Source information:
Structure probing data (2A3 and DMS) for a 177-nucleotide construct. It was measured as part of the RMDB library TTRDES. 2A3 adducts were read by reverse transcription with SuperScript II with manganese. For 2A3, 31,336 sequencing reads were counted. Values cover nucleotides 27 to 126. For DMS the reverse transcriptase was MarathonRT.
[RMDB]
RNA sequence: GGGAACGACUCGAGUAGAGUCGAAAAGAUAUGGAUCUGCAUUCUUGGAACGAAGAACUACCUCGGAAACGAGGUAGGGAGUUCGAUGCUGGAUCCUAAGUCAAAGCGGUGUGUUCGCACACCGCAAGUUAAUAGAAACGUUCGCGUUUCUAUUAACAAAAGAAACAACAACAACAAC
Reactivity to 2A3 in 0.01 (KOAc 150mM, MgCl2 10mM, bicine 150mM(pH8.5), 24C), signal-to-noise 9, nucleotides 027 to 126: g010a000u020a010u060g000g000a000u000c010u030g000c020a030u110u250c100u300u300g300g060a030a010c020g220a300a060g010a010a010c000u000a000c000c000u000c000g000g000a010a010a000c000g000a000g000g000u000a000g000g000g000a020g000u080u140c290g020a000u010g000c100u160g050g000a000u000c010c000u000a010a000g000u010c070a140a080a060g000c010g000g010u020g000u010g040u050u190c300g030c140a000c000a000c000c000g000c000a000a000
Reactivity to DMS in 0.01 (KOAc 150mM, MgCl2 10mM, bicine 150mM(pH8.5), 24C), signal-to-noise 6, nucleotides 027 to 126: g000a020u000a090u010g000g000a010u000c000u000g010c000a010u000u010c300u010u010g030g020a030a020c010g000a110a190g010a140a200c000u000a000c000c000u000c000g000g000a030a020a070c000g000a010g010g000u000a000g000g000g000a030g020u000u000c020g010a020u000g010c000u010g030g000a010u000c000c000u000a010a080g000u000c010a070a140a170g010c000g010g010u000g030u000g010u000u010c270g020c010a010c000a010c000c000g010c000a000a020